Description:
An RNA of 177 nucleotides, treated with 2A3 and DMS and read out base by base. 2A3 adducts were read by reverse transcription with SuperScript II with manganese. Reactivities are given for positions 27 through 126.
RNA sequence: GGGAACGACUCGAGUAGAGUCGAAAACGAGCGACAGAGCCUGGCGGCAGACCUUGCUGAAAAUGGCGGAUCUACUCAGCGAACAGCAACCCGAUGCCGCUAUCGGUUUCCGGCUACGCCGCCAUGAGUAGCUAUCGUGAUUCGUCACGAUAGCUACAAAAGAAACAACAACAACAAC
Reactivity to 2A3 in 0.01 (KOAc 150mM, MgCl2 10mM, bicine 150mM(pH8.5), 24C), signal-to-noise 2, nucleotides 027 to 126: c030g000a030g040c010g130a090c080a260g030a060g030c020c040u010g010g000c030g010g000c000a000g000a140c010c000u030u030g040c000u010g060a040a120a050a090u160g080g000c030g000g040a020u010c050u210a090c060u040c130a030g000c000g060a070a060c060a060g040c010a040a000c090c000c040g000a020u030g070c030c000g000c040u010a040u110c020g040g000u020u120u040c020c010g020g000c030u090a120c050g050c030c000g000c000c000a030u040g050a030
Reactivity to DMS in 0.01 (KOAc 150mM, MgCl2 10mM, bicine 150mM(pH8.5), 24C), signal-to-noise 2, nucleotides 027 to 126: c070g000a110g020c010g000a070c100a070g000a220g030c080c020u000g010g030c010g010g030c010a060g030a150c110c080u000u000g000c040u010g000a090a080a040a300u030g000g010c000g000g000a100u000c100u000a060c120u010c060a170g020c010g010a100a150c100a060g000c040a020a080c080c020c070g000a110u000g000c010c020g010c100u020a020u000c060g020g000u000u000u010c050c070g000g020c040u020a050c080g000c020c020g010c020c010a010u000g010a140